[RMDB]
RNA sequence: GGGAACGACUCGAGUAGAGUCGAAAAAUGACCUGGGCGUGGGGCCAUAUUUUUUGGGAACCUUCGAUAAGCAUUUUCCGGGCUUCAUCUCUAAGGAGCGUAUGAGCUGCGCCAUCGUUAAUACCGCCCACAACACAAUAUUCGUAUUGUGUUGUGGAAAAGAAACAACAACAACAAC
Reactivity to 2A3 in 0.01 (KOAc 150mM, MgCl2 10mM, bicine 150mM(pH8.5), 24C), signal-to-noise 4, nucleotides 027 to 126: a000u060g030a040c020c010u050g070g000g010c010g030u040g000g030g040g000c020c000a020u050a060u040u160u020u020u050u070g060g000g000a040a100c010c000u040u030c060g060a080u030a210a020g020c050a060u100u050u030u020c030c010g070g030g000c030u040u030c040a050u020c020u010c040u090a100a080g040g000a070g040c020g010u040a030u100g050a040g030c030u030g000c020g010c000c010a070u070c020g000u010u050a040a030u040a160c020c020g000c010
Reactivity to DMS in 0.01 (KOAc 150mM, MgCl2 10mM, bicine 150mM(pH8.5), 24C), signal-to-noise 5, nucleotides 027 to 126: a100u000g010a060c040c040u010g010g010g020c030g030u000g000g030g010g010c030c020a020u000a000u000u010u010u010u000u010g000g000g000a080a100c150c030u000u000c170g010a100u010a040a080g020c070a090u000u000u000u010c040c080g010g020g000c030u000u010c100a040u010c060u010c100u010a080a080g000g000a050g020c110g010u010a030u000g010a100g010c040u000g020c060g010c020c020a080u000c110g000u000u010a050a080u010a160c050c030g000c160
This 177-nucleotide RNA was probed chemically with 2A3 and DMS. 2A3 adducts were read by reverse transcription with SuperScript II with manganese. Source: RMDB library OK2TST, as collected in RNAgym. The RNA was probed in 150 mM KOAc, 10 mM MgCl2 and 150 mM bicine (pH 8.5) at 24 C.